[RMDB]
RNA sequence: GGGAACGACUCGAGUAGAGUCGAAAAGGAACAGGAAGGAAAAGGCUAUAACAGAUCCGAGAUGCCCUCAGAUGCCCUGGGCUGCACGCGCAAUACAAUAGCAGGUAGAGAGAGAGACAGGAAGGUGAAGAAAUUGAGCAUUCGUGCUCAAUUUCUUAAAAGAAACAACAACAACAAC
Reactivity to 2A3 in 0.01 (KOAc 150mM, MgCl2 10mM, bicine 150mM(pH8.5), 24C), signal-to-noise 2, nucleotides 027 to 126: g010g000a010a040c030a030g060g070a070a000g010g040a010a010a020a060g010g010c010u050a040u060a270a030c010a020g050a130u000c010c000g030a020g010a090u130g040c000c040c000u020c070a050g000a150u080g000c000c000c000u000g060g020g000c040u030g040c010a020c050g030c020g030c000a000a110u170a120c090a100a000u030a100g010c040a040g060g000u090a010g000a000g000a000g000a010g020a000g000a160c020a020g000g040a100a000g000g000u020g050
Reactivity to DMS in 0.01 (KOAc 150mM, MgCl2 10mM, bicine 150mM(pH8.5), 24C), signal-to-noise 3, nucleotides 027 to 126: g000g010a070a070c040a070g000g000a110a090g000g030a050a050a160a110g010g000c030u000a080u010a080a100c150a060g020a100u020c010c040g010a120g030a110u020g030c060c020c030u010c090a070g000a090u020g000c030c010c090u040g000g000g040c040u020g000c040a050c110g060c050g000c040a060a050u070a060c160a070a050u000a050g000c060a030g010g010u010a040g000a100g000a020g010a090g000a070g020a040c040a030g000g020a050a050g000g020u020g000